[RMDB]
RNA sequence: GGGAACGACUCGAGUAGAGUCGAAAAGUGCACGCGCUCGCACUAGAUAGUACUAUCUCUAGGAUCCUAGCUAGGUACGAUCUAGACGGUACCACAGUAGUGCUAGCAGUGCGUAUAUCGGUACGCGCGCCAAAGAGCGGUUCGCCGCUCUUUGGCGAAAAGAAACAACAACAACAAC
Reactivity to 2A3 in 0.01 (KOAc 150mM, MgCl2 10mM, bicine 150mM(pH8.5), 24C), signal-to-noise 1, nucleotides 027 to 126: g110u070g040c020a010c040g100c030g040c050u000c000g000c030a030c000u000a030g050a100u040a010g030u010a010c010u010a030u090c030u000c030u060a050g070g060a090u090c040c030u050a120g030c100u160a030g060g160u070a080c090g050a100u000c000u000a010g000a030c020g000g030u020a020c000c000a050c020a130g120u060a000g000u000g020c000u000a020g030c040a000g000u020g010c000g000u020a040u020a030u050c080g000g040u080a030c110g000c000g020
Reactivity to DMS in 0.01 (KOAc 150mM, MgCl2 10mM, bicine 150mM(pH8.5), 24C), signal-to-noise 2, nucleotides 027 to 126: g040u010g000c040a030c000g000c130g020c050u010c140g010c030a050c000u010a040g000a140u020a070g020u000a040c010u000a160u000c150u000c120u000a040g090g000a070u000c020c040u000a100g000c180u010a060g000g000u020a060c210g010a050u000c000u000a050g030a050c110g010g050u000a040c000c020a060c230a060g010u000a020g010u020g010c000u000a040g000c020a150g000u000g000c010g000u000a020u010a090u000c120g000g040u000a060c090g000c050g000
Chemical mapping of a 177-nucleotide RNA with 2A3 and DMS.
Source: RMDB library OK2TRN, as collected in RNAgym.
For DMS, 1,090 sequencing reads were counted.
For 2A3 the reverse transcriptase was SuperScript II with manganese.
DMS adducts were read by reverse transcription with MarathonRT.